[RMDB]
RNA sequence: GGGAACGACUCGAGUAGAGUCGAAAACUGGUGUACGACUCGCAGAGGCAUUGCUCUCGGUGGAGUGAGGCCCUACAUCAGAGUAGGGCCAUGUGGAUCUCAGAGUCGGAGUCCAUUCGGAACCAGGGCGGAAUGGGUCCUUCGGGAUCUAUUUCGCAAAAGAAACAACAACAACAAC
Reactivity to DMS in 0.01 (KOAc 150mM, MgCl2 10mM, bicine 150mM(pH8.5), 24C), signal-to-noise 6, nucleotides 027 to 126: c020u000g000g010u000g000u010a100c020g000a030c000u000c000g000c030a050g000a020g010g010c010a150u020u050g010c070u030c010u000c020g010g030u010g010g010a020g000u010g000a120g020g010c010c000c000u010a000c000a090u040c300a180g010a200g010u000a000g000g000g010c000c000a000u010g010u000g000g000a040u040c010u000c020a170g000a000g020u020c080g010g000a040g000u010c000c000a030u010u010c030g000g020a180a000c000c000a000g000g000
Reactivity to 2A3 in 0.01 (KOAc 150mM, MgCl2 10mM, bicine 150mM(pH8.5), 24C), signal-to-noise 9, nucleotides 027 to 126: c000u000g000g000u000g010u020a010c000g000a000c000u000c000g020c020a010g000a000g020g000c070a170u070u300g030c030u030c010u010c090g090g060u140g110g030a010g010u050g030a180g010g000c000c000c000u000a010c010a110u260c110a050g050a020g220u000a000g000g000g000c000c000a000u020g000u010g020g050a110u080c010u000c050a040g020a000g100u080c050g020g000a010g020u000c010c000a020u080u070c030g020g010a010a000c000c000a010g010g040

Structure probing data (DMS and 2A3) for a 177-nucleotide construct.
DMS adducts were read by reverse transcription with MarathonRT.
The DMS profile rests on 42,210 reads.
It was measured as part of the RMDB library OK1LIB.